[RMDB]
RNA sequence: GGGAACGACUCGAGUAGAGUCGAAAAAUCAUCGUCUCUUUAAUUCUAUUCUAUCUAUUUAACCCAAUCGUAAAUAUGAUGGAACGUUAUAGAAUACCAAGAGUUGCAGGUAUUUCUAUUAUUUAUCGAUAGAGACAUUUUUCGAAAUGUCUCUAUCAAAAGAAACAACAACAACAAC
Reactivity to DMS in 0.01 (KOAc 150mM, MgCl2 10mM, bicine 150mM(pH8.5), 24C), signal-to-noise 2, nucleotides 027 to 126: a070u000c110a070u020c070g030u010c020u000c010u000u000u000a160a050u020u020c050u010a140u000u010c000u000a030u000c000u000a030u020u000u000a090a110c000c040c030a100a100u010c200g010u010a010a000a010u000a000u010g030a040u000g010g000a020a070c300g000u010u010a080u010a000g010a030a030u000a060c150c070a090a140g020a080g010u000u020g010c240a070g000g000u000a000u000u010u000c000u000a060u020u010a080u000u010u010a070u020c090
Reactivity to 2A3 in 0.01 (KOAc 150mM, MgCl2 10mM, bicine 150mM(pH8.5), 24C), signal-to-noise 1, nucleotides 027 to 126: a000u070c040a000u050c000g070u020c110u070c000u170u270u140a300a110u220u000c000u120a070u060u000c000u020a110u010c020u000a060u110u060u070a300a170c020c100c000a040a100u150c070g020u010a000a100a000u090a060u300g080a020u000g000g000a130a000c000g000u020u000a020u020a020g000a000a000u000a050c000c000a140a050g070a130g130u190u220g100c110a130g160g000u000a000u100u220u000c000u030a100u200u110a020u090u230u100a190u280c040
Structure probing data (DMS and 2A3) for a 177-nucleotide construct.
High DMS reactivity at an A or C suggests that its Watson-Crick edge is free.
Values cover nucleotides 27 to 126.
2A3 adducts were read by reverse transcription with SuperScript II with manganese.